Structure probing data (DMS and 2A3) for a 177-nucleotide construct.
It was measured as part of the RMDB library OK2TRN.
For DMS, 3,384 sequencing reads were counted.
RNA sequence: GGGAACGACUCGAGUAGAGUCGAAAAAACUAUUCAAGAAUUUUGUAAAAUCAUUGAUGCCUCAUCAACCGUAUUUUGGAAUGGCCCUGUGGGUGUUUAUGAAGUUCCUCCUUUUGAUCAGGGGUCCGAUCCGGUAUAUAUUCGUAUAUACCGGAUCAAAAGAAACAACAACAACAAC
Reactivity to DMS in 0.01 (KOAc 150mM, MgCl2 10mM, bicine 150mM(pH8.5), 24C), signal-to-noise 4, nucleotides 027 to 126: a060a060c030u000a060u000u010c030a090a140g010a120a100u000u000u000u000g010u010a090a050a070a070u010c040a060u000u000g000a030u000g000c060c030u010c060a090u000c060a080a110c080c050g000u000a070u010u000u010u000g010g010a100a060u000g010g000c020c050c050u000g020u000g020g000g020u000g010u000u000u000a040u010g010a090a070g000u000u000c010c030u000c080c030u000u000u010u010g010a120u000c120a080g010g000g010g020u010c150c200
Reactivity to 2A3 in 0.01 (KOAc 150mM, MgCl2 10mM, bicine 150mM(pH8.5), 24C), signal-to-noise 2, nucleotides 027 to 126: a010a000c060u100a090u120u170c050a060a020g060a200a060u080u150u250u230g050u160a070a050a050a190u050c010a060u010u070g030a020u070g020c000c000u060c020a060u030c010a050a140c040c000g050u080a170u040u210u120u210g070g070a150a030u030g020g010c090c000c000u070g040u140g050g030g000u050g070u030u110u020a020u020g000a040a020g010u050u000c010c000u040c020c030u050u140u170u090g080a130u060c000a020g020g040g000g030u000c020c020
DMS adducts were read by reverse transcription with MarathonRT.